[RMDB]
RNA sequence: GGGAACGACUCGAGUAGAGUCGAAAAGGGUAGUAGAUGUAGAUACAGGCUCUACUGAACAAGAAAGCGGAAGCCCUGCUCUGGGUGAAAUUAAGAUAUGGUGCUAUUUCAAGAUGCAAUACCAUAAACGUGGAGAUAUUUUCGAAUAUCUCCACGUAAAAGAAACAACAACAACAAC
Reactivity to 2A3 in 0.01 (KOAc 150mM, MgCl2 10mM, bicine 150mM(pH8.5), 24C), signal-to-noise 2, nucleotides 027 to 126: g090g000g030u040a060g030u040a000g020a140u110g030u080a020g000a140u160a180c040a040g090g000c000u010c020u040a030c000u040g090a060a020c060a100a050g140a170a080a000g070c020g020g040a030a030g020c010c000c020u030g050c010u040c070u030g040g000g000u080g070a070a090a050u150u100a100a000g020a070u040a010u100g020g000u020g040c020u030a100u120u150u130c070a060a020g040a060u130g000c000a030a030u060a160c020c000a030u060a030a100
Reactivity to DMS in 0.01 (KOAc 150mM, MgCl2 10mM, bicine 150mM(pH8.5), 24C), signal-to-noise 5, nucleotides 027 to 126: g010g010g020u000a040g010u000a020g030a090u010g010u000a080g030a130u010a110c110a130g020g000c060u010c010u000a050c020u000g010a090a110c140a090a080g010a080a090a090g020c050g010g010a140a120g000c050c020c000u000g010c120u000c050u020g010g020g040u000g000a030a050a060u020u000a070a100g000a120u000a010u010g020g000u000g020c040u010a060u000u010u010c150a090a100g000a100u010g010c010a070a090u020a230c030c030a030u010a040a080
This 177-nucleotide RNA was probed chemically with 2A3 and DMS. As a SHAPE reagent, 2A3 marks flexible, mostly unpaired nucleotides at the ribose 2'-OH. For DMS the reverse transcriptase was MarathonRT. It was measured as part of the RMDB library OK2TST. The RNA was probed in 150 mM KOAc, 10 mM MgCl2 and 150 mM bicine (pH 8.5) at 24 C.